[RMDB]
RNA sequence: GGGAACGACUCGAGUAGAGUCGAAAAUAGGGAGGCUAAGACUAGAGUUUUAGUCGUCGUUAAUUCCCAAGAUGUCUAUAAGAGUCUUACCAUAGUUGACAUUCCACAGAGUUUGACUUUUUCAUAUACAGCCAGCGGUUCGCCGCUGGCAAAAGAAACAACAACAACAAC
Reactivity to DMS in 0.01 (KOAc 150mM, MgCl2 10mM, bicine 150mM(pH8.5), 24C), signal-to-noise 2, nucleotides 027 to 129: u010a050g180g000g040a080g010g010c010u000a000a090g010a070c010u000a070g000a280g020u110u000u000u000a000g020u040c030g020u020c130g060u090u000a130a080u090u000c000c000c100a000a000g000a060u100g030u040c020u030a120u070a050a270g000a000g040u050c020u020u000a010c000c060a240u040a070g030u080u300g000a080c110a200u070u060c000c040a220c120a210g010a150g000u000u020u120g020a080c000u060u140u010u000u010c180a110u040a140u010a160c030a030
Reactivity to 2A3 in 0.01 (KOAc 150mM, MgCl2 10mM, bicine 150mM(pH8.5), 24C), signal-to-noise 1, nucleotides 027 to 129: u140a000g000g050g000a000g020g040c000u050a020a020g000a000c040u090a050g010a000g210u000u000u000u000a020g000u000c000g010u000c010g030u070u050a000a050u070u030c000c000c060a070a000g040a000u260g060u000c000u030a000u000a040a030g000a000g010u010c030u030u100a020c000c000a010u000a060g010u000u070g050a070c040a020u080u000c000c000a040c000a040g090a010g040u020u070u020g070a000c000u020u040u000u000u000c010a100u090a000u000a160c000a000